Chemical mapping of a 207-nucleotide RNA with DMS and 2A3. Source: RMDB library OK3TST, as collected in RNAgym. For 2A3 the reverse transcriptase was SuperScript II with manganese.
RNA sequence: GGGAACGACUCGAGUAGAGUCGAAAAUAGGCGAACGAGAGGCCCUCUCGUGUGCGGAGUUGUCACGCUGACACAAUUGUUAUGAUGUCCGAUUCCGGUAGCAUCGCGGCGAUGAUUUCAUAGGACAUCUUAUGAACCCAAGGGCUUCGGGGAAGCACCAUGCACCACUAUUCGUAGUGGUGCAUGGAAAAGAAACAACAACAACAAC
Reactivity to DMS in 0.01 (KOAc 150mM, MgCl2 10mM, bicine 150mM(pH8.5), 24C), signal-to-noise 2, nucleotides 027 to 156: u000a140g000g020c010g000a070a040c050g000a110g010a080g040g030c000c040c030u000c040u000c020g020u000g010u000g000c030g030g010a150g020u010u010g030u000c030a090c080g030c040u000g000a130c050a080c040a080a120u000u010g040u020u000a050u010g010a030u000g010u000c000c010g000a200u010u010c040c080g040g020u010a070g000c040a040u010c030g040c090g000g040c070g020a080u000g000a030u000u000u000c060a040u010a150g080g000a030c070a030u000c010u000u000a050u000g010a070a080c090c020c030a100a080g020g010g010c010u000u000c020g010g020g040g000a110a080g020c070a200
Reactivity to 2A3 in 0.01 (KOAc 150mM, MgCl2 10mM, bicine 150mM(pH8.5), 24C), signal-to-noise 3, nucleotides 027 to 156: u130a020g080g010c040g030a040a030c030g010a050g020a040g110g020c000c020c000u000c010u020c060g040u030g040u060g030c050g010g040a110g040u080u040g030u060c090a020c130g030c050u060g090a010c010a000c010a100a160u050u160g070u070u110a090u080g030a020u000g010u000c020c010g050a090u100u070c040c010g020g040u100a050g070c040a020u050c020g020c050g140g040c050g030a070u080g020a020u040u100u090c050a060u100a050g000g000a010c010a020u000c000u020u040a050u040g060a030a050c000c010c010a050a040g000g010g010c000u040u050c020g000g000g000g000a110a020g030c030a010